Structure probing data (2A3 and DMS) for a 177-nucleotide construct.
The reactions ran in a buffer of 150 mM KOAc, 10 mM MgCl2 and 150 mM bicine (pH 8.5), at 24 C.
Values cover nucleotides 27 to 126.
For 2A3 the reverse transcriptase was SuperScript II with manganese.

RNA sequence: GGGAACGACUCGAGUAGAGUCGAAAAUGAUAAUGUAUGUGGUGAUAGGGGAGUACUCUGAUGGUAGAGGAGUGACUUUGGUUCUCUGCAAACUCAGCCUGAGACUAUCAAUUCAGUUUGUGGUGAGACCUAGUGUAGUGUUCGCACUACACUAGGUAAAAGAAACAACAACAACAAC
Reactivity to 2A3 in 0.01 (KOAc 150mM, MgCl2 10mM, bicine 150mM(pH8.5), 24C), signal-to-noise 3, nucleotides 027 to 126: u110g020a040u040a110a050u130g090u140a050u090g070u020g050g010u020g040a120u080a110g070g020g000g020a030g030u020a040c020u010c060u120g070a070u060g080g070u080a030g000a030g070g020a020g030u070g050a050c020u060u050u080g040g020u120u020c050u010c000u000g000c000a030a000a050c030u030c050a020g030c010c030u060g020a050g020a050c020u060a090u120c070a040a050u110u030c030a030g050u000u040u080g070u030g060g000u050g050a030g010
Reactivity to DMS in 0.01 (KOAc 150mM, MgCl2 10mM, bicine 150mM(pH8.5), 24C), signal-to-noise 7, nucleotides 027 to 126: u000g010a100u010a090a090u000g010u000a060u000g020u000g010g020u000g010a090u010a100g010g010g010g000a110g030u000a070c050u000c030u000g020a120u000g010g010u000a050g010a160g010g000a070g010u010g000a040c070u000u000u000g010g010u010u000c030u000c030u000g010c070a040a030a100c060u000c110a090g010c080c050u010g000a090g010a100c100u000a070u000c070a060a110u010u010c130a030g000u000u000u000g020u010g000g010u000g010a120g000